[RMDB]
RNA sequence: GGGAACGACUCGAGUAGAGUCGAAAAUGGCUUCUCGUGGGCGAUCGCUCGCUGUUUUUGUGGCUGGCUUUCAGCGGGCUGGAGGAGCCGGGAGCGGAGGCGGAGGACCGAGCCAAAAACGUCAGCCUAUAGAGGAAGCUGUUCGCAGCUUCCUCAAAGGCUAUACCUAUUUCGAUAGGUAUAGCCUAAAAGAAACAACAACAACAAC
Reactivity to 2A3 in 0.01 (KOAc 150mM, MgCl2 10mM, bicine 150mM(pH8.5), 24C), signal-to-noise 2, nucleotides 027 to 156: u100g000g010c010u020u000c020u030c020g030u140g040g060g020c080g090a120u100c080g000c020u010c010g000c010u010g060u050u000u030u050u130g110u040g020g000c010u000g000g000c010u010u040u040c010a010g020c000g030g010g000c050u060g040g020a000g010g000a010g000c010c020g010g010g000a030g000c080g020g060a040g050g020c100g020g010a050g040g010a030c060c080g000a030g040c040c030a040a040a030a010a030c050g010u000c010a000g010c000c000u080a160u090a050g010a020g000g010a000a000g000c000u010g010u060u110c200g000c090a000g000c000u010u000c000c000u000c000a000a000